[RMDB]
RNA sequence: GGGAACGACUCGAGUAGAGUCGAAAAAACGCAGCGCCAGCAGCAUCUCAUCUACCCUCCUUGACACCUCCCCGUGGCUCCAGCCAGACCCUAGAGGUCAGCCUUGCGGACCAACAGGAGGACUCCCGUUUACGCUCGGAUUCGUCCGAGCGUAAACAAAAGAAACAACAACAACAAC
Reactivity to DMS in 0.01 (KOAc 150mM, MgCl2 10mM, bicine 150mM(pH8.5), 24C), signal-to-noise 1, nucleotides 027 to 126: a130a070c070g000c000a030g000c060g000c000c000a120g030c050a050g010c200a070u030c000u000c020a000u020c000u000a100c070c000c060u000c070c000u040u000g000a110c090a050c070c010u000c050c000c000c180g000u050g000g060c020u000c100c050a020g000c000c120a070g000a060c000c000c020u000a020g000a300g000g010u000c000a100g000c020c070u000u020g000c040g030g010a070c050c000a070a190c210a150g000g160a110g000g000a190c010u010c000c000c070
Reactivity to 2A3 in 0.01 (KOAc 150mM, MgCl2 10mM, bicine 150mM(pH8.5), 24C), signal-to-noise 3, nucleotides 027 to 126: a000a010c130g000c060a040g000c030g010c010c000a030g020c010a000g020c010a060u060c010u020c030a100u030c030u060a060c000c000c000u020c000c000u050u050g050a020c030a050c000c010u060c000c010c010c010g000u040g000g030c080u020c020c000a000g040c010c000a020g000a030c020c000c020u100a080g030a060g080g000u030c000a000g020c010c030u090u230g030c080g020g000a020c030c030a040a070c000a020g020g000a010g040g000a000c020u000c000c000c000